[RMDB]
RNA sequence: GGGAACGACUCGAGUAGAGUCGAAAAUAGCGAAGUAGGAUUUUAUGCGUCAAGUAUUCACAGGCUGGGGAGUCGCCGUGAAACGAAAAGCAGAAAGCGUGCUGCUUACGAUAUAAUUUCCGCACCCAUAAGAAGUCUCUGUUCGCAGAGACUUCAACUAGGUUGGACGAUUCGUCGUCCAACCUAGAAAAGAAACAACAACAACAAC
Reactivity to 2A3 in 0.01 (KOAc 150mM, MgCl2 10mM, bicine 150mM(pH8.5), 24C), signal-to-noise 2, nucleotides 027 to 156: u100a030g050c030g060a160a010g050u100a110g040g000a020u000u010u020u000a020u090g000c010g020u000c050a060a000g020u040a210u050u020c040a040c070a080g020g000c010u070g030g020g080g020a050g130u140c030g010c010c000g010u000g000a030a030a010c050g050a010a000a000a090g000c030a010g090a090a110a040g170c140g030u080g030c010u000g000c000u010u000a010c010g030a000u000a010u010a140a020u010u010u010c000c000g000c040a050c010c010c010a010u030a130a040g010a000a000g000u000c000u000c000u000g020u030u050c240g010c030a000g010a000g000a000c000u000u000c000a010a000